RNA sequence: GGGAACGACUCGAGUAGAGUCGAAAAGGUGUAGGCCAGGCUAGCUAUUUGCAUAGAAUUCUGUUCAGUGUAUGGCUUUGUUGCAUUAACUCUUAUAAGUGAGAUAGUCUGGAGGAGGAAAAAAAUGUUAAAUUUGGAUGAAAAGCUGGCUUUUCCAUCAUUAUGAAGUCUUCGGACUUCAUAAUGAAAAAGAAACAACAACAACAAC
Reactivity to DMS in 0.01 (KOAc 150mM, MgCl2 10mM, bicine 150mM(pH8.5), 24C), signal-to-noise 3, nucleotides 027 to 156: g010g010u010g020u010a070g010g010c010c030a100g010g010c050u010a050g030c020u010a090u000u010u010g020c040a090u010a200g010a090a090u000u000c100u000g030u000u000c070a220g030u000g020u000a100u000g010g040c050u000u010u000g020u030u000g000c040a200u000u000a060a090c030u000c020u000u000a150u000a070a090g020u000g000a090g030a120u000a110g020u000c020u000g010g030a070g020g010a110g000g020a000a000a050a080a040a030a100u000g000u010u000a020a040a160u000u000u000g010g000a130u000g000a050a040a060a120g010c020u000g020g000c050u000u000u000u000c020c010a290
Reactivity to 2A3 in 0.01 (KOAc 150mM, MgCl2 10mM, bicine 150mM(pH8.5), 24C), signal-to-noise 3, nucleotides 027 to 156: g000g000u040g020u050a020g010g050c000c000a020g040g000c020u020a020g000c000u050a080u120u120u150g030c010a020u040a110g090a110a090u130u050c040u150g090u100u060c020a030g050u010g040u110a050u060g050g000c020u020u060u060g040u040u050g020c010a010u060u130a090a090c030u020c010u060u220a130u050a300a050g040u080g070a020g020a100u030a040g030u020c050u080g010g000a000g000g030a020g020g000a030a080a010a010a000a010a060u110g000u090u120a070a130a250u130u110u080g040g020a010u020g060a050a070a080a010g040c040u070g040g040c010u050u040u030u030c030c000a030